[RMDB]
RNA sequence: GGGAACGACUCGAGUAGAGUCGAAAACUAAAACCAAGAUAUUGAAGAUGCUAACACAGCAACCCCAAGUGGCCUUUCACCUCACUGCACAUACGUUACAUGAGUUAAUGUCUCUAUAUCCAGGUGCACGACUGGAAACGUUCGCGUUUCCAGUCGUAAAAGAAACAACAACAACAAC
Reactivity to 2A3 in 0.01 (KOAc 150mM, MgCl2 10mM, bicine 150mM(pH8.5), 24C), signal-to-noise 3, nucleotides 027 to 126: c050u050a020a050a040a020c070c050a050a020g100a090u070a080u050u300g050a110a060g080a050u040g000c090u060a060a010c060a030c030a110g050c040a100a040c040c000c010c000a110a030g020u040g030g020c040c000u010u040u070c010a050c010c000u020c000a080c050u070g010c030a020c000a070u120a050c080g060u070u050a030c010a090u140g040a050g070u110u040a090a020u090g010u020c000u000c020u000a020u000a020u040c000c020a020g000g020u030g050c040
Reactivity to DMS in 0.01 (KOAc 150mM, MgCl2 10mM, bicine 150mM(pH8.5), 24C), signal-to-noise 1, nucleotides 027 to 126: c080u030a150a030a180a060c020c060a100a210g000a250u060a040u010u000g000a060a000g000a140u000g020c000u000a040a030c170a090c110a000g000c000a110a080c000c000c010c000a000a030g040u000g020g010c040c000u020u000u110c020a060c040c030u000c140a040c000u010g000c230a000c070a020u000a030c100g030u000u000a130c120a090u000g000a100g020u000u000a030a080u060g010u000c000u000c000u000a040u000a100u010c000c030a110g000g010u030g000c010
Chemical mapping of a 177-nucleotide RNA with 2A3 and DMS. The reactions ran in a buffer of 150 mM KOAc, 10 mM MgCl2 and 150 mM bicine (pH 8.5), at 24 C. For 2A3 the reverse transcriptase was SuperScript II with manganese. The DMS profile rests on 1,059 reads.